Structure probing data (2A3 and DMS) for a 207-nucleotide construct. 2A3 is a SHAPE reagent: it acylates the 2'-hydroxyl of flexible nucleotides of all four kinds.

[RMDB]
RNA sequence: GGGAACGACUCGAGUAGAGUCGAAAAAGGCUAGCCGAUCACUCUUGUUCAGGGGCGGCCGGCGAAACUCUCUGAACUGGUCCAAUCCGGAUCCUGUCAGUCGGAGCUGGUGAGGAUGAGAAAGCCGUAGCAUAGACUGACUACGCACGUAGUGGUCCAUCAAUAUAUCGUUCGCGAUAUAUUGAUGAAAAGAAACAACAACAACAAC
Reactivity to 2A3 in 0.01 (KOAc 150mM, MgCl2 10mM, bicine 150mM(pH8.5), 24C), signal-to-noise 4, nucleotides 027 to 156: a010g060g010c020u020a010g020c010c010g030a060u080c040a050c050u060c010u080u140g080u280u170c090a030g000g010g040g020c030g000g000c000c000g020g000c010g050a070a070a060c020u020c010u010c030u080g060a080a040c050u130g100g000u000c010c000a000a020u020c000c010g020g000a020u010c000c030u010g030u040c010a010g000u030c010g010g010a010g010c000u010g000g010u010g010a010g000g020a020u090g010a020g010a050a050a010g040c020c030g070u090a030g050c020a030u030a040g010a000c000u010g040a010c000u020a020c050g070c050a030c140g040u070a030g050u050g010g020u040c050
Reactivity to DMS in 0.01 (KOAc 150mM, MgCl2 10mM, bicine 150mM(pH8.5), 24C), signal-to-noise 2, nucleotides 027 to 156: a080g000g000c000u000a210g030c000c000g030a050u000c060a030c000u010c020u000u000g000u010u010c170a140g050g000g000g010c020g000g020c000c020g000g000c010g000a090a080a090c070u010c000u000c020u020g000a120a070c030u010g040g010u010c010c030a110a300u000c000c000g020g000a030u000c000c010u000g000u010c030a080g010u010c040g030g020a180g030c010u000g050g020u000g000a300g040g000a070u000g020a150g000a040a100a160g000c050c010g000u000a090g000c060a160u000a120g010a100c010u000g000a040c010u000a020c060g010c080a090c090g000u000a080g010u000g000g000u000c040
The DMS profile rests on 3,438 reads.
Conditions: 150 mM KOAc, 10 mM MgCl2 and 150 mM bicine (pH 8.5), 24 C.
Source: RMDB library RSTRND, as collected in RNAgym.